[RMDB]
RNA sequence: GGGAACGACUCGAGUAGAGUCGAAAAGACACCCUUGGCAGAUGACCUCCUCGUUGGUGCGUGUCGGUAAUGUUGUCAGUCACAGGCAACAGUUAACGAUCUGCUUAAAUAAAAAGAGAAGAACAAAGAGUAUGCCUCAUUUCGAUGAGGCAUACUCAAAAGAAACAACAACAACAAC
Reactivity to 2A3 in 0.01 (KOAc 150mM, MgCl2 10mM, bicine 150mM(pH8.5), 24C), signal-to-noise 3, nucleotides 027 to 126: g040a000c020a080c020c000c090u010u080g000g000c000a000g000a020u000g040a020c010c000u020c000c000u110c050g120u110u180g140g020u140g010c150g010u060g000u000c020g010g010u140a100a050u010g010u000u010g000u020c030a050g150u150c040a100c040a170g000g000c000a000a000c000a020g060u010u070a010a010c030g040a020u000c000u010g000c000u000u060a030a020a000u150a000a110a000a000a000g130a010g020a080a130g080a040a040c050a080a120a010
Reactivity to DMS in 0.01 (KOAc 150mM, MgCl2 10mM, bicine 150mM(pH8.5), 24C), signal-to-noise 2, nucleotides 027 to 126: g010a070c100a070c060c000c000u000u000g000g000c000a000g000a040u000g000a120c000c000u000c000c000u010c140g000u010u000g070g010u020g000c160g000u000g020u020c000g000g000u000a110a100u020g000u000u000g010u000c030a070g010u110c220a070c170a200g000g000c000a010a160c090a030g010u050u000a100a040c050g000a080u000c000u000g020c020u000u050a090a060a120u070a030a100a060a120a110g050a060g000a040a100g070a140a050c270a030a130a130

Conditions: 150 mM KOAc, 10 mM MgCl2 and 150 mM bicine (pH 8.5), 24 C. Chemical mapping of a 177-nucleotide RNA with 2A3 and DMS. Reactivities are rounded to 0.1 and cut off at 0 and 3. 2A3 adducts were read by reverse transcription with SuperScript II with manganese. The DMS profile rests on 1,839 reads. In probing experiments dimethyl sulfate is read out at A N1 and C N3, which are open when not base-paired.